[RMDB]
RNA sequence: GGGAACGACUCGAGUAGAGUCGAAAAAAUCCACCACAUAACCUCACACUGGAGAAUCGAGACAACCCCCCCGAAGGGCCUAGUUCAUACAGGGGUCAUAUGGGAGGGAUUGAAGGACUGCAACAAAAGUCCUCAAGUUUUUCGAAACUUGAGGACUAAAAGAAACAACAACAACAAC
Reactivity to 2A3 in 0.01 (KOAc 150mM, MgCl2 10mM, bicine 150mM(pH8.5), 24C), signal-to-noise 2, nucleotides 027 to 126: a050a000u100c020c010a060c050c010a080c000a060u030a010a010c000c020u070c020a050c010a000c040u030g050g000a030g080a150a060u160c110g000a010g020a110c010a010a070c000c000c060c000c000c000c040g050a060a200g030g000g000c000c010u010a020g010u020u210c070a060u130a300c040a020g130g010g050g000u010c000a030u080a040u180g030g040g070a070g010g020g010a000u010u050g010a010a000g020g020a050c030u030g000c040a060a030c020a050a230a000
Reactivity to DMS in 0.01 (KOAc 150mM, MgCl2 10mM, bicine 150mM(pH8.5), 24C), signal-to-noise 1, nucleotides 027 to 126: a070a040u040c000c000a070c140c080a000c030a040u000a090a020c050c020u000c100a020c040a070c130u070g020g000a190g020a070a100u000c110g000a180g020a120c060a020a110c020c000c000c000c010c010c010g010a070a080g000g000g000c020c000u000a000g040u020u050c220a160u040a120c000a020g010g000g000g000u030c000a000u000a150u100g000g080g000a050g050g000g010a000u000u000g000a170a110g000g000a050c030u010g000c080a090a070c180a050a070a120